Source: RMDB library OK1LIB, as collected in RNAgym. Structure probing data (2A3 and DMS) for a 177-nucleotide construct.
[RMDB]
RNA sequence: GGGAACGACUCGAGUAGAGUCGAAAAGUACCGAUUGACGAGUUCGUGGGUCGCAGUCGGAUACCCCAGUGCCGACAGCGACCGGUGGAGCAACGUCUCGAGAGUCACGCCUACCCCAUGGACGAUCUGGUAAUCGGGUAUUCGUACCCGAUUACCAAAAAGAAACAACAACAACAAC
Reactivity to 2A3 in 0.01 (KOAc 150mM, MgCl2 10mM, bicine 150mM(pH8.5), 24C), signal-to-noise 4, nucleotides 027 to 126: g080u050a080c010c020g010a070u020u120g060a020c000g020a030g080u020u060c050g040u180g100g010g000u010c000g010c000a010g000u000c000g000g000a080u180a170c020c030c000c020a090g050u100g190c000c000g000a010c010a050g000c000g000a000c000c000g000g010u060g040g000a030g010c040a090a160c030g020u010c000u020c010g120a110g000a010g070u060c020a020c040g040c010c000u080a160c000c000c010c000a030u080g030g000a040c030g000a070u000c050
Reactivity to DMS in 0.01 (KOAc 150mM, MgCl2 10mM, bicine 150mM(pH8.5), 24C), signal-to-noise 2, nucleotides 027 to 126: g070u030a090c060c030g000a060u040u000g000a030c000g020a300g000u010u010c020g000u000g000g040g000u000c000g060c020a040g030u020c000g000g010a150u030a040c060c080c080c070a150g010u000g000c000c000g020a050c030a050g020c000g000a030c000c000g010g040u030g000g000a060g000c060a140a050c060g000u010c020u000c050g000a080g010a070g000u000c000a040c050g000c010c010u000a050c030c020c010c020a180u050g000g000a150c060g020a140u020c040

For 2A3 the reverse transcriptase was SuperScript II with manganese. The RNA was probed in 150 mM KOAc, 10 mM MgCl2 and 150 mM bicine (pH 8.5) at 24 C. For DMS, 3,299 sequencing reads were counted. The 2A3 profile rests on 2,734 reads.